Conditions: 150 mM KOAc, 10 mM MgCl2 and 150 mM bicine (pH 8.5), 24 C. The record gives the reactivity of an RNA of 207 nucleotides to 2A3 and DMS. For DMS the reverse transcriptase was MarathonRT. For DMS, 2,754 sequencing reads were counted. DMS (dimethyl sulfate) methylates the pairing face of unpaired adenines and cytosines. For 2A3 the reverse transcriptase was SuperScript II with manganese. Values cover nucleotides 27 to 156.

[RMDB]
RNA sequence: GGGAACGACUCGAGUAGAGUCGAAAAAUUAGUCAUUUAGCAAUCAAACCUAUUGUUUACAUUUUGAUAUCUCCAAUAACUAACUAAAUGGAGCACUUUUAAUAUGCUUUUUGGACAGUUGAAUAUCUUUUCUUGUGAAAUGUCUAUUCAAGUUAGAAAAUUAAUCAUUAUUCGUAAUGAUUAAUUUAAAAGAAACAACAACAACAAC
Reactivity to 2A3 in 0.01 (KOAc 150mM, MgCl2 10mM, bicine 150mM(pH8.5), 24C), signal-to-noise 1, nucleotides 027 to 156: a010u190u120a040g040u020c000a000u040u040u130a020g000c010a040a090u080c030a090a070a140c020c050u100a090u040u080g020u050u040u020a160c060a070u000u100u090u050g010a000u020a100u180c000u000c000c000a030a130u050a150a080c070u050a050a040c000u090a150a120a080u140g020g000a000g000c000a050c000u100u080u000u000a130a100u050a050u140g050c000u010u220u010u110u030g060g030a020c050a060g020u000u020g020a050a030u060a060u180c000u060u030u010u040c040u040u100g000u000g050a070a100a140u020g060u020c030u050a080u050u040c030a010a000g050u000u070a030g000a050
Reactivity to DMS in 0.01 (KOAc 150mM, MgCl2 10mM, bicine 150mM(pH8.5), 24C), signal-to-noise 2, nucleotides 027 to 156: a130u010u010a080g000u010c050a060u000u010u020a100g020c090a130a100u000c050a070a110a160c090c070u000a070u010u010g010u000u020u000a080c060a090u000u010u000u000g000a100u000a070u000c020u000c080c040a040a080u000a070a120c050u010a040a080c020u010a030a050a070u000g010g000a070g020c020a010c050u000u000u000u000a060a170u010a070u010g000c020u000u000u000u000u010g000g000a080c040a100g000u000u000g000a100a090u000a020u000c010u020u000u000u000c030u010u010g020u000g000a050a040a060u000g010u010c050u010a120u020u000c000a030a080g020u000u010a180g000a140